[RMDB]
RNA sequence: GGGAACGACUCGAGUAGAGUCGAAAAUUUAGUGGGCCACUUUUGGUAAGCAGAACUGGCGAUGUGGGAUGAACCAAACGCAGAGUUAAGGUGCCGGAAUAUACACUUAUCAGACACCACAAAAGGUGUGUAUCCAAGUUUUCGAACUUGGAUACACAAAAGAAACAACAACAACAAC
Reactivity to DMS in 0.01 (KOAc 150mM, MgCl2 10mM, bicine 150mM(pH8.5), 24C), signal-to-noise 3, nucleotides 027 to 126: u010u020u030a050g020u010g010g020g020c050c060a020c140u000u000u010u000g030g010u000a070a070g010c040a090g020a090a060c040u020g030g000c000g000a050u020g010u000g000g000g020a100u020g030a140a130c000c010a060a040a070c080g010c090a020g000a110g020u010u010a070a090g000g000u000g030c020c030g000g060a070a050u040a090u040a120c090a040c100u000u010a050u030c120a070g000a080c060a050c000c020a030c240a090a000a160a070g030g040u010
Reactivity to 2A3 in 0.01 (KOAc 150mM, MgCl2 10mM, bicine 150mM(pH8.5), 24C), signal-to-noise 4, nucleotides 027 to 126: u060u060u050a040g020u030g010g020g100c040c030a050c020u030u050u020u060g030g000u040a020a020g030c040a030g060a120a070c030u020g040g020c020g020a090u090g050u060g030g030g020a150u140g040a060a070c000c000a040a040a040c020g020c040a010g020a010g230u050u070a100a020g030g010u020g040c010c000g010g040a010a010u120a010u020a070c040a020c040u040u040a020u040c010a010g080a090c030a010c040c010a020c000a020a130a010a030g110g040u030